[RMDB]
RNA sequence: GGGAACGACUCGAGUAGAGUCGAAAAGAUAUGGACAGAACUACAGCUCAUACACACGAAGAACUCGGAAACGAGGGAGUGUGUAGGAAGCUGCUGUCCUAAGUCAAAACUACUCUUCGGAGUAGAACUAACAAAGCUCGUUCGCGAGCUUUGUUAGAAAAGAAACAACAACAACAAC
Reactivity to DMS in 0.01 (KOAc 150mM, MgCl2 10mM, bicine 150mM(pH8.5), 24C), signal-to-noise 1, nucleotides 027 to 126: g030a010u000a300u000g000g000a000c000a000g010a040a040c080u010a300c020a000g010c000u020c000a150u000a000c000a000c000a000c020g000a170a140g000a090a150c010u000c000g000g000a050a080a050c000g000a000g030g000g000a070g030u000g010u030g010u010a000g020g020a150a100g010c000u000g030c000u000g010u010c000c030u000a000a090g000u010c020a070a070a150a160c000u000a000c000u000c000u000u000c190g080g000a000g040u000a020g000a040a210
Reactivity to 2A3 in 0.01 (KOAc 150mM, MgCl2 10mM, bicine 150mM(pH8.5), 24C), signal-to-noise 1, nucleotides 027 to 126: g000a060u070a040u190g000g000a010c010a010g000a090a020c090u270a060c290a010g040c000u000c000a040u020a020c020a000c000a010c000g120a300a030g000a030a030c000u000c000g020g000a020a120a060c000g030a010g000g050g000a040g000u030g010u010g030u020a000g000g030a130a010g000c010u000g050c010u000g000u000c000c000u010a090a000g050u040c020a000a000a130a230c000u000a000c010u030c000u070u070c270g190g000a000g010u000a000g000a040a000
Conditions: 150 mM KOAc, 10 mM MgCl2 and 150 mM bicine (pH 8.5), 24 C. An RNA of 177 nucleotides, treated with DMS and 2A3 and read out base by base. The 2A3 profile rests on 1,473 reads. DMS adducts were read by reverse transcription with MarathonRT. The data come from the RNA Mapping Database (RMDB), library TTRDEL.